[RMDB]
RNA sequence: GGGAACGACUCGAGUAGAGUCGAAAAAAUGCCGCCUAAGUUCCAAGCUCUUUCGUGGCACUGUAAACAGUCCUAUUGAGUUAGGGGCAGUCAACCACGUUGCGAAGCUAAAUUAUCUGGUCGAGAGUUACGAUUCCCUACUUCGGUAGGGAAUCAAGUCUACUCCGUAGUUCGCUACGGAGUAGACAAAAGAAACAACAACAACAAC
Reactivity to 2A3 in 0.01 (KOAc 150mM, MgCl2 10mM, bicine 150mM(pH8.5), 24C), signal-to-noise 2, nucleotides 027 to 156: a000a060u080g040c040c030g000c010c000u100a100a040g050u080u000c000c000a080a000g000c000u000c000u040u020u010c040g030u050g010g000c120a030c020u050g010u070a000a160a180c080a080g080u080c010c000u000a030u060u120g100a140g260u040u020a010g010g030g020g000c010a000g020u020c010a010a020c000c000a020c010g040u030u070g020c070g140a050a030g000c020u040a090a170a050u180u110a080u040c110u060g050g000u050c040g060a000g020a050g240u100u130a030c060g000a000u010u000c000c000c000u000a010c000u010u060c080g050g000u000a020g000g000g000a000a000u000c000a000a000